[RMDB]
RNA sequence: GGGAACGACUCGAGUAGAGUCGAAAACAGACGAUGUUUGAAUACAUUAGCAUGGAAUAAUAAUGUUGUCGUAUGACAUCCAUUGGAUUGUGUUAUAUGAUGUGGAUUAAUAGAAACAGUUGUGGGUGUUACUGUAUGAGUUCGCUCAUACAGUAACAAAAGAAACAACAACAACAAC
Reactivity to 2A3 in 0.01 (KOAc 150mM, MgCl2 10mM, bicine 150mM(pH8.5), 24C), signal-to-noise 3, nucleotides 027 to 126: c010a010g100a020c050g040a010u030g100u030u070u100g140a120a050u130a060c000a030u010u080a020g030c060a060u090g050g140a120a070u130a110a050u100a030a030u090g050u120u060g020u040c010g030u070a030u090g000a000c000a000u040c020c020a080u080u110g070g050a100u090u140g050u000g050u130u030a070u020a000u060g060a030u060g030u050g100g010a040u070u090a110a070u110a150g090a040a070a000c040a040g000u020u020g020u030g020g050g020u020
Reactivity to DMS in 0.01 (KOAc 150mM, MgCl2 10mM, bicine 150mM(pH8.5), 24C), signal-to-noise 3, nucleotides 027 to 126: c060a100g010a160c090g010a040u000g020u020u000u000g010a180a090u000a050c020a020u000u000a080g010c110a090u000g000g010a140a080u010a080a080u000a050a050u020g020u000u000g000u000c030g010u000a050u010g010a060c090a020u000c070c050a110u000u010g030g000a150u000u020g010u000g000u010u000a040u010a020u000g000a100u000g000u000g000g000a070u000u000a080a100u010a030g000a100a050a060c100a040g010u000u010g020u000g010g000g010u000